RNA sequence: GGGAACGACUCGAGUAGAGUCGAAAAGGCUGCGUAUCACUCUAGGGUACGUGAUAGUGCGAUAUAAGAACCACUGGUACAUGCCGGCAGGGACAGUUAAGAGAUGGCCGCAGUCUCGUGUCCCUGCAAAAGGAGUUCUCGUUCGCGAGAACUCCAACAAGACUUCACGGUUCGCCGUGAAGUCUUGAAAAGAAACAACAACAACAAC
Reactivity to 2A3 in 0.01 (KOAc 150mM, MgCl2 10mM, bicine 150mM(pH8.5), 24C), signal-to-noise 2, nucleotides 027 to 156: g020g000c040u000g000c040g020u020a030u030c050a050c170u120c170u250a130g160g000g000u010a000c000g000u020g070a080u100a100g030u050g040c100g050a020u020a000u080a250a040g060a060a010c010c010a010c060u030g040g000u080a070c060a100u160g040c020c030g010g010c000a000g000g000g000a000c000a050g030u180u190a190a040g000a020g000a020u040g150g000c090c120g020c070a010g020u010c000u000c020g020u020g000u000c000c010c010u000g000c000a000a000a000a000g000g000a000g000u000u010c020u000c000g000u060u030c210g000c020g080a000g000a000a000c000u000c000c000a000a030